[RMDB]
RNA sequence: GGGAACGACUCGAGUAGAGUCGAAAACUGACUCCGCCCACUUUGCUCUUGGGAUGCUGGCGUCUACACUUGAUGCGUAUAAGAUGUACGCGGUUAUUGUAAUGUACUUGGUAUACCAAUUUGCGUCGUGCUUAAGUUCAUUCGUGAACUUAAGCACAAAAGAAACAACAACAACAAC
Reactivity to 2A3 in 0.01 (KOAc 150mM, MgCl2 10mM, bicine 150mM(pH8.5), 24C), signal-to-noise 2, nucleotides 027 to 126: c020u050g110a040c030u030c010c030g010c030c020c000a050c040u140u160u190g010c020u010c010u010u040g000g040g020a030u030g000c030u030g020g000c030g030u000c080u040a010c020a020c030u030u070g040a030u070g040c020g010u010a030u020a080a260g130a190u280g010u010a000c020g000c000g000g040u080u070a040u050u080g080u070a000a100u080g040u050a060c020u040u060g070g000u020a020u020a090c000c000a060a140u040u040u120g070c050g030u100c020
Reactivity to DMS in 0.01 (KOAc 150mM, MgCl2 10mM, bicine 150mM(pH8.5), 24C), signal-to-noise 4, nucleotides 027 to 126: c120u000g010a120c080u010c050c070g020c030c030c030a090c150u010u000u010g010c030u000c100u000u010g010g000g020a060u000g020c030u000g020g010c100g010u000c070u010a040c050a070c140u000u010g000a150u010g000c020g010u000a010u010a080a140g010a140u000g000u000a020c000g000c000g000g010u000u010a030u000u000g020u000a030a110u000g000u000a060c070u000u000g020g000u000a060u000a090c040c050a040a060u010u000u000g010c070g020u010c130